Source information: The record gives the reactivity of an RNA of 207 nucleotides to DMS and 2A3. Reactivities are given for positions 27 through 156. 2A3 adducts were read by reverse transcription with SuperScript II with manganese. Conditions: 150 mM KOAc, 10 mM MgCl2 and 150 mM bicine (pH 8.5), 24 C.
RNA sequence: GGGAACGACUCGAGUAGAGUCGAAAAGAGCGUACCAAGCUGCAUUUCAACCUGCAAGGGUUGGGGCGGCUUAGCGAUUAAGGCGUUGUUCCACCCUAGUGGCCCUUACCCCAUGCAAAGUCUACAUGCAAGCGAGGUAUUGUGCCGCGGGGCACAACAUAGUUUAUUGCUUCGGCAAUAAACUAUGAAAAGAAACAACAACAACAAC
Reactivity to DMS in 0.01 (KOAc 150mM, MgCl2 10mM, bicine 150mM(pH8.5), 24C), signal-to-noise 1, nucleotides 027 to 156: g000a120g030c010g010u020a060c070c000a050a100g000c000u000g000c070a150u010u000u000c010a030a050c030c020u000g020c300a210a200g010g020g040u000u000g020g000g010g000c000g020g020c000u000u030a020g020c010g000a240u000u000a060a170g020g010c090g050u010u020g040u000u000c000c020a090c010c030c010u000a030g090u010g050g020c040c000c000u000u010a070c020c020c040c060a080u000g020c020a100a030a220g000u010c040u000a080c030a150u000g010c110a070a160g030c090g020a120g010g020u000a050u000u010g050u000g020c000c040g050c140g000g000g050g040c020a020c040a060a110
Reactivity to 2A3 in 0.01 (KOAc 150mM, MgCl2 10mM, bicine 150mM(pH8.5), 24C), signal-to-noise 3, nucleotides 027 to 156: g060a000g040c040g020u050a070c010c050a030a010g010c010u010g000c040a140u010u110u300c010a000a000c010c010u060g110c090a120a170g060g000g000u010u010g010g000g020g010c000g020g010c010u000u030a010g000c030g120a150u170u250a080a130g110g030c080g050u040u060g020u090u060c030c000a050c010c000c000u000a050g000u010g030g000c000c010c010u000u010a000c000c000c010c010a020u030g000c000a110a040a140g100u110c070u140a160c070a110u070g000c000a000a090g050c030g140a090g020g000u010a010u010u040g090u240g000c000c000g010c000g000g020g000g000c070a010c050a070a040